[RMDB]
RNA sequence: GGGAACGACUCGAGUAGAGUCGAAAAGAUAUGGAUGUAUACAGCCUCGGAUAGCGAACACAUCGGAAACGAUGUGAAUUCGUGCGGAGAGCUGUACAUCCUAAGUCAAAGGAGUCUUCGGACUCCAGCAUUCUGAAACGUUCGCGUUUCAGAAUGCAAAAGAAACAACAACAACAAC
Reactivity to 2A3 in 0.01 (KOAc 150mM, MgCl2 10mM, bicine 150mM(pH8.5), 24C), signal-to-noise 1, nucleotides 027 to 126: g020a000u070a050u120g000g010a000u020g010u060a270u060a280c000a030g000c040c000u000c070g220g060a170u170a120g040c000g000a000a000c000a000c000a000u010c040g000g010a060a070a050c000g010a000u000g030u000g040a040a080u040u000c010g050u040g070c160g040g100a060g050a030g000c000u000g000u010a010c000a000u000c000c010u000a130a020g050u020c030a000a050a230g010g000a000g020u000c000u060u120c300g140g010a020c030u100c000c000a020
Reactivity to DMS in 0.01 (KOAc 150mM, MgCl2 10mM, bicine 150mM(pH8.5), 24C), signal-to-noise 1, nucleotides 027 to 126: g000a070u000a300u000g000g010a050u000g020u000a200u000a050c020a020g000c070c000u020c010g000g010a060u000a300g010c000g000a000a120c010a020c000a000u000c010g000g010a050a150a210c040g000a010u000g030u000g000a030a130u000u000c000g000u000g020c150g010g000a020g000a080g000c000u000g010u000a020c000a000u000c000c000u000a020a120g010u000c060a090a160a130g000g010a000g000u000c000u000u020c220g060g010a030c010u000c000c010a040